[RMDB]
RNA sequence: GGGAACGACUCGAGUAGAGUCGAAAACUUCUCGAGAAUUCGCCUUUUCUUCCUUUCUUCCACCCACUGCUCGAGGAUCUCCUCCCUCCCCUUCGAGGAUUCCCCUGCGACGGGUAGGCUCAUCCUGAUAGUUCCAGGUUCGCCUGGAACAAAAGAAACAACAACAACAAC
Reactivity to 2A3 in 0.01 (KOAc 150mM, MgCl2 10mM, bicine 150mM(pH8.5), 24C), signal-to-noise 7, nucleotides 027 to 129: c010u040u020c010u010c000g040a040g020a040a140u110u060c020g090c010c000u060u060u040u040c020u040u080c010c020u020u070u030c010u030u020c010c030a050c020c020c010a060c020u040g010c010u010c000g010a040g000g020a060u010c010u010c020c000u020c000c000c000u020c000c000c000c000u020u040c020g040a030g000g020a020u050u060c020c000c000c010u060g030c020g070a050c030g010g020g020u020a020g020g000c020u020c020a040u030c010c010u020g030a030u080a150
Reactivity to DMS in 0.01 (KOAc 150mM, MgCl2 10mM, bicine 150mM(pH8.5), 24C), signal-to-noise 6, nucleotides 027 to 129: c140u020u010c000u030c000g050a110g030a180a080u060u020c050g000c050c030u010u010u020u020c050u000u000c000c000u020u010u010c060u030u050c050c060a110c000c000c000a130c020u020g020c020u000c040g030a000g050g020a120u020c080u030c030c040u000c010c040c000u030c030c000c000c020u030u030c000g040a060g030g010a190u030u020c020c000c010c030u020g030c000g020a070c110g000g000g070u040a060g020g030c050u020c050a080u020c020c020u040g010a130u020a140